[RMDB]
RNA sequence: GGGAACGACUCGAGUAGAGUCGAAAACGAUUGUACAUAUCACAAGAAGGGUAUUGUUAUGUAAAUGUAUUCUUAGCAAUGUUGGUGAACGUCAACGAGGAUGAUGCCAAGAAUUUCACAAAGAUUGGCUCCUUCAUUAAUUCGUUAAUGAAGGAGCAAAAGAAACAACAACAACAAC
Reactivity to DMS in 0.01 (KOAc 150mM, MgCl2 10mM, bicine 150mM(pH8.5), 24C), signal-to-noise 6, nucleotides 027 to 126: c090g010a100u000u000g010u000a040c040a040u000a040u000c060a070c130a080a090g020a130a130g000g000g010u010a060u000u000g010u000u000a040u000g000u010a020a060a210u010g000u000a040u000u000c020u010u000a090g000c030a020a070u000g000u000u000g010g000u000g000a060a070c200g010u000c060a020a060c060g000a130g020g000a110u000g000a110u000g000c010c020a040a060g010a040a050u000u000u000c050a050c110a080a080a090g000a130u000u000g010
Reactivity to 2A3 in 0.01 (KOAc 150mM, MgCl2 10mM, bicine 150mM(pH8.5), 24C), signal-to-noise 4, nucleotides 027 to 126: c030g050a070u060u120g060u070a020c020a040u070a030u110c030a020c020a130a080g150a100a070g150g020g010u110a050u100u110g000u080u060a040u040g080u100a010a080a080u120g020u020a100u100u000c020u030u010a000g010c020a040a070u110g020u030u030g070g010u080g080a100a030c090g020u010c020a020a030c040g020a040g060g000a060u170g000a030u070g020c020c000a010a020g030a030a050u060u080u070c110a090c020a050a110a050g150a190u030u080g060